[RMDB]
RNA sequence: GGGAACGACUCGAGUAGAGUCGAAAAACAAACUGGUGCCGCGCAAGGAAUUCCGUGGCGUCGCGCAGGCUCGGCUUACCGAGGUCGGCCUCUGGGACGCGGUCAAGGAUCGGCUCAGCGAUUCACCCAUCGUUGUUCGGUUCGCCGAACAACGAUGAAAAGAAACAACAACAACAAC
Reactivity to DMS in 0.01 (KOAc 150mM, MgCl2 10mM, bicine 150mM(pH8.5), 24C), signal-to-noise 1, nucleotides 027 to 126: a050c120a080a170a080c070u000g040g010u000g010c000c010g040c100g000c170a130a130g000g000a090a130u000u000c060c000g000u000g010g010c000g000u000c010g000c050g010c300a050g010g040c020u010c020g000g000c010u000u010a090c250c210g000a080g000g020u000c020g000g000c000c000u000c050u000g000g000g000a010c020g000c010g010g000u010c050a060a100g030g010a030u010c000g000g000c030u000c020a020g010c030g010a120u010u010c070a180c020c000
Reactivity to 2A3 in 0.01 (KOAc 150mM, MgCl2 10mM, bicine 150mM(pH8.5), 24C), signal-to-noise 2, nucleotides 027 to 126: a010c050a030a070a010c040u010g000g100u100g060c020c020g010c000g070c110a130a110g110g060a220a170u120u000c050c020g020u080g100g000c030g000u030c020g000c010g000c070a020g030g070c100u170c220g030g000c040u050u060a250c060c080g090a090g060g020u030c000g000g000c000c020u000c010u020g110g000g030a030c010g010c000g130g080u140c070a090a090g010g010a030u040c020g030g010c000u020c030a020g030c010g030a010u050u070c090a250c080c000